The data come from the RNA Mapping Database (RMDB), library OK1LIB. An RNA of 177 nucleotides, treated with 2A3 and DMS and read out base by base. Conditions: 150 mM KOAc, 10 mM MgCl2 and 150 mM bicine (pH 8.5), 24 C. For 2A3 the reverse transcriptase was SuperScript II with manganese.

RNA sequence: GGGAACGACUCGAGUAGAGUCGAAAAUUACUCACCAUGCUUGUUGAAAGAGAGUGUGCCUGCUCUAUCAAAAGCACAUUGCCAUUUUUGUUAUUAUGAGUGGAGUUAUUAGUCCACUAACACUCUCCGUUUUAAUUAAUUUCGAUUAAUUAAAACGAAAAGAAACAACAACAACAAC
Reactivity to 2A3 in 0.01 (KOAc 150mM, MgCl2 10mM, bicine 150mM(pH8.5), 24C), signal-to-noise 8, nucleotides 027 to 126: u100u090a060c020u010c040a120c020c010a050u070g020c040u070u070g030u040u030g060a050a080a020g030a000g000a000g000u020g010u040g070c020c020u040g020c010u000c010u020a160u070c030a050a050a040a000g090c020a010c030a070u130u230g080c050c030a130u080u050u050u030u090g120u130u110a150u180u050a060u180g050a010g010u030g020g010a070g040u120u140a180u150u130a130g120u040c010c000a010c050u030a040a000c010a010c000u000c000u000c010
Reactivity to DMS in 0.01 (KOAc 150mM, MgCl2 10mM, bicine 150mM(pH8.5), 24C), signal-to-noise 4, nucleotides 027 to 126: u020u020a120c110u000c010a130c120c120a080u030g000c070u000u000g000u010u010g000a060a070a060g000a020g010a030g030u010g000u000g000c120c160u020g000c060u000c050u030a070u020c170a060a070a100a050g000c020a110c170a040u000u020g000c090c180a070u010u000u030u000u000g000u000u020a020u020u000a050u000g010a030g020u010g010g000a060g010u030u050a100u050u050a100g000u000c020c020a030c020u000a040a030c020a000c020u000c030u000c050